[RMDB]
RNA sequence: GGGAACGACUCGAGUAGAGUCGAAAAGUAUGGAUGCCACCGUGACGGCUCAAUCACACAAGUGCCAACGAUAACGAGGCGCUCGCUAUUGCUGCGUAACUGACGGCCUGACGGUCUGACGUUACAACUGAAUCAUGUUGUUCGCAACAUGAUUCAGAAAAGAAACAACAACAACAAC
Reactivity to 2A3 in 0.01 (KOAc 150mM, MgCl2 10mM, bicine 150mM(pH8.5), 24C), signal-to-noise 6, nucleotides 027 to 126: g080u060a070u150g050g050a060u080g030c020c010a030c040c040g040u050g040a040c050g010g000c010u010c070a050a080u100c020a010c020a010c000a120a060g020u030g040c000c010a110a070c090g100a130u090a100a060c080g020a070g050g000c020g030c010u010c020g010c020u050a080u130u130g030c050u050g010c040g030u020a020a010c010u010g010a000c010g010g010c010c010u130g120a060c100g010g020u000c010u000g010a010c000g010u010u010a010c010a030a020
Reactivity to DMS in 0.01 (KOAc 150mM, MgCl2 10mM, bicine 150mM(pH8.5), 24C), signal-to-noise 3, nucleotides 027 to 126: g070u000a100u000g010g040a080u010g020c060c080a080c070c060g000u000g000a080c180g020g000c100u000c080a060a070u000c050a040c170a030c180a070a040g020u010g040c050c000a040a060c080g040a110u000a020a100c060g020a180g000g000c120g000c030u000c010g040c010u000a080u000u030g000c070u010g010c100g010u010a030a020c000u000g020a300c250g000g020c020c000u030g080a150c180g000g010u000c030u000g010a230c120g020u000u000a000c010a070a180